[RMDB]
RNA sequence: GGGAACGACUCGAGUAGAGUCGAAAAGUGCCGCGAUCGGUUAGUUCUGUUUGAUCCUUCGACCUUGACGCUUGCUGUUGCCGGAGCGAGCGACGAGGGCAGGAUCAAACAUGUCGCGCAUCGGUCACUGGUAAUUAAUCUUCGGAUUAAUUACCAGAAAAGAAACAACAACAACAAC
Reactivity to DMS in 0.01 (KOAc 150mM, MgCl2 10mM, bicine 150mM(pH8.5), 24C), signal-to-noise 7, nucleotides 027 to 126: g010u010g010c060c020g020c130g010a020u000c070g010g010u000u010a110g010u000u000c070u000g000u000u000u000g000a010u000c010c000u000u010c080g010a130c000c010u000u000g010a120c010g010c010u000u000g000c010u000g020u010u010g010c090c070g010g000a040g000c000g000a010g020c000g010a050c000g010a010g010g000g020c090a040g000g000a010u000c000a010a010a010c010a020u010g010u000c090g010c030g010c120a040u000c030g010g000u000c090a300
Reactivity to 2A3 in 0.01 (KOAc 150mM, MgCl2 10mM, bicine 150mM(pH8.5), 24C), signal-to-noise 7, nucleotides 027 to 126: g050u040g090c050c010g050c060g010a030u040c040g030g090u090u110a040g020u110u090c030u050g010u010u010u010g000a000u000c010c000u040u070c040g070a120c000c000u000u010g010a000c000g000c000u020u020g000c010u030g060u240u110g080c060c050g040g010a010g010c010g000a000g000c000g000a000c010g000a000g000g000g010c010a000g000g000a000u000c000a000a000a000c000a000u030g020u010c070g000c000g000c030a020u050c020g020g000u040c030a020